This 177-nucleotide RNA was probed chemically with 2A3 and DMS. For 2A3 the reverse transcriptase was SuperScript II with manganese. The 2A3 profile rests on 4,013 reads. The RNA was probed in 150 mM KOAc, 10 mM MgCl2 and 150 mM bicine (pH 8.5) at 24 C.
[RMDB]
RNA sequence: GGGAACGACUCGAGUAGAGUCGAAAAGAUAUGGAUCGUGAUGACCAAGCCGAAUUCUACCAAAUGGCUACAUCGGAAACGAUGUAGCCAUUUGAGAAUAUAGACAGCUUGCAAGCGAUCCUAAGUCCUUAAUGUUUUACUUCGGUAAAACAUUAAGAAAAGAAACAACAACAACAAC
Reactivity to 2A3 in 0.01 (KOAc 150mM, MgCl2 10mM, bicine 150mM(pH8.5), 24C), signal-to-noise 2, nucleotides 027 to 126: g080a050u120a060u300g010g010a030u000c010g000u010g130a300u190g050a150c150c050a000a000g010c000c010g120a060a140u100u000c010u050a300c130c100a000a020a010u010g000g000c000u000a000c030a030u000c020g030g070a100a090a060c000g000a000u000g010u000a000g040c000c000a000u010u000u000g000a000g000a010a010u160a010u030a040g110a050c010a030g000c010u020u020g040c030a190a220g010c000g000a000u010c000c000u000a090a050g020u070c000
Reactivity to DMS in 0.01 (KOAc 150mM, MgCl2 10mM, bicine 150mM(pH8.5), 24C), signal-to-noise 8, nucleotides 027 to 126: g020a100u010a280u000g000g000a000u000c010g040u000g000a120u030g010a170c300c000a010a000g010c000c020g020a120a120u000u000c020u000a210c300c020a000a000a000u000g000g000c000u000a000c000a000u000c010g010g000a130a080a220c010g000a000u000g000u000a000g010c000c000a000u000u000u010g010a040g010a050a040u000a140u010a130g010a190c300a060g000c010u000u000g000c030a070a250g010c010g010a000u000c010c000u000a040a100g010u010c040